Structure probing data (2A3 and DMS) for a 177-nucleotide construct.

RNA sequence: GGGAACGACUCGAGUAGAGUCGAAAAAGAUGCCAGGCUACGGCCUGGCAUCAAUAACCUGUAAUCUUCGUAUAGGACGAAGAGCAUCCACCCUCAAACCGCUUAAUUUGAGGUCACCAGGGAGAAAUUACUUGGACGGAUUCGUCCGUCCAAGUAAAAAAGAAACAACAACAACAAC
Reactivity to 2A3 in 0.01 (KOAc 150mM, MgCl2 10mM, bicine 150mM(pH8.5), 24C), signal-to-noise 1, nucleotides 027 to 126: a030g000a000u000g020c000c000a000g010g030c000u080a030c240g040g000c060c020u000g000g000c030a020u000c000a000a000u000a000a010c000c000u000g050u050a040a090u050c000u000u020c040g040u070a080u080a300g110g000a000c010g000a000a010g000a010g000c000a060u040c020c020a000c060c010c000u000c010a040a020a130c060c090g040c140u090u110a080a010u120u010u000g090a040g010g020u050c080a110c010c130a000g090g000g000a050g030a010a080a040
Reactivity to DMS in 0.01 (KOAc 150mM, MgCl2 10mM, bicine 150mM(pH8.5), 24C), signal-to-noise 1, nucleotides 027 to 126: a050g000a000u000g000c060c010a020g000g000c000u000a210c260g000g010c000c000u040g000g040c000a000u000c000a020a040u030a030a210c000c000u010g000u010a250a040u010c020u000u000c000g000u020a110u040a020g000g000a020c000g000a020a000g050a030g020c110a090u020c080c080a170c030c000c070u000c020a030a000a010c020c020g090c110u060u040a070a140u000u040u000g040a000g000g040u010c080a020c300c020a050g000g000g010a070g040a130a100a090
DMS adducts were read by reverse transcription with MarathonRT. The data come from the RNA Mapping Database (RMDB), library RFM100. The DMS profile rests on 1,535 reads. The reactions ran in a buffer of 150 mM KOAc, 10 mM MgCl2 and 150 mM bicine (pH 8.5), at 24 C. Reactivities are given for positions 27 through 126.